[RMDB]
RNA sequence: GGGAACGACUCGAGUAGAGUCGAAAAAUGACGCUGGUGAACCAUCGCGAGCUGGGAGAGGAGAGGCGAAGAUAGCAGCGGAGACCCCGGUCCGAAUGCCCGUCGGCAGCAAACUCCUCUGGAGUCCUUAGCAUAGAGUUCGCUCUAUGCAAAAGAAACAACAACAACAAC
Reactivity to DMS in 0.01 (KOAc 150mM, MgCl2 10mM, bicine 150mM(pH8.5), 24C), signal-to-noise 9, nucleotides 027 to 129: a090u050g000a090c090g020c070u010g000g000u000g020a060a060c050c040a050u020c070g020c120g000a070g030c080u010g030g020g000a060g020a050g000g000a050g010a050g000g020c100g020a060a060g000a040u040a070g040c060a070g020c100g000g000a040g030a130c030c030c030c020g030g030u010c020c020g020a040a040u000g020c030c030c060g010u030c010g000g050c030a110g000c090a050a070a070c020u000c010c000u040c090u030g000g000a100g000u000c060c030u010u010a230
Reactivity to 2A3 in 0.01 (KOAc 150mM, MgCl2 10mM, bicine 150mM(pH8.5), 24C), signal-to-noise 9, nucleotides 027 to 129: a000u110g030a020c050g010c070u040g010g050u070g030a040a030c010c010a050u060c050g020c040g040a030g010c030u060g010g030g010a050g010a010g030g010a020g000a010g020g010c030g020a020a000g020a030u120a030g030c050a000g020c020g020g010a030g030a070c010c000c000c000g010g020u020c020c010g040a120a050u080g020c010c010c020g050u040c010g030g020c010a020g010c010a020a040a110c010u020c010c000u090c040u080g010g010a020g020u020c030c000u070u130a020

This 170-nucleotide RNA was probed chemically with DMS and 2A3. It was measured as part of the RMDB library 15KLIB. Conditions: 150 mM KOAc, 10 mM MgCl2 and 150 mM bicine (pH 8.5), 24 C. For DMS the reverse transcriptase was MarathonRT.